[RMDB]
RNA sequence: GGGAACGACUCGAGUAGAGUCGAAAAGGGGUCUUAUCACCUUGGAUUUAAUAAGGAGGUAUGCUGAAGCCUCCACGGCAUACUACCCACCCUUAUUUGUCAGGUGGGAGUAAGACGGAGGCACCCAAAGAACGCAUGAGUUCGCUCAUGCGUUCAACGAAUAACGACACUUCGGUGUCGUUAUUCGAAAAGAAACAACAACAACAAC
Reactivity to 2A3 in 0.01 (KOAc 150mM, MgCl2 10mM, bicine 150mM(pH8.5), 24C), signal-to-noise 3, nucleotides 027 to 156: g060g010g030g020u040c030u050u040a100u210c070a030c010c020u020u040g120g020a120u170u220u300a280a230u280a070a040g060g020a040g030g000u000a000u010g000c020u020g030a150a010g010c000c000u000c010c000a000c010g000g030c000a010u000a010c000u030a050c020c020c000a020c010c040c010u120u150a290u220u300u210g300u210c190a060g010g010u010g000g000g000a000g000u000a010a000g010a000c070g000g000a010g010g000c000a020c000c000c010a060a100a000g010a010a000c000g000c000a000u000g000a000g010u050u120c280g080c060u000c010a000u000g000c000g000u000u000c000a000a000